Record summary
The record gives the reactivity of an RNA of 177 nucleotides to 2A3 and DMS.
[RMDB]
RNA sequence: GGGAACGACUCGAGUAGAGUCGAAAACGUGCGUACUGGGCCGCCGGCACAAUGUUCCACCCAGCCGUCUCAGAGGACGCGGUUCGACGACGAUCAGCCAGCCGGUCAGCGGGGUCCUCCUAGCUAGGACUGAGUAUACCUUCGGGUAUACUCAGUCAAAAGAAACAACAACAACAAC
Reactivity to 2A3 in 0.01 (KOAc 150mM, MgCl2 10mM, bicine 150mM(pH8.5), 24C), signal-to-noise 1, nucleotides 027 to 126: c060g040u070g070c030g030u070a110c020u070g020g010g020c000c010g070c000c010g000g000c010a020c000a110a140u180g010u090u000c010c020a040c030c010c010a040g000c030c020g090u010c030u010c070a080g030a090g100g030a020c020g000c030g070g020u070u050c040g020a010c030g010a030c040g030a100u080c010a000g050c040c000a020g040c040c000g000g050u040c030a020g010c030g030g050g000g050u000c010c000u000c000c010u030a040g040c000u070a050g060
Reactivity to DMS in 0.01 (KOAc 150mM, MgCl2 10mM, bicine 150mM(pH8.5), 24C), signal-to-noise 2, nucleotides 027 to 126: c100g030u010g000c120g010u000a070c090u010g030g010g000c120c060g050c040c040g020g000c020a110c100a100a090u000g000u000u000c030c030a160c070c010c030a080g000c070c020g000u020c090u010c030a100g000a090g020g010a040c050g010c050g020g000u000u000c050g000a070c050g020a100c070g000a070u000c080a090g000c050c060a110g030c010c050g000g000u010c070a060g000c060g010g020g000g010u010c020c010u000c010c030u010a080g020c120u010a080g010

Reactivities are given for positions 27 through 126.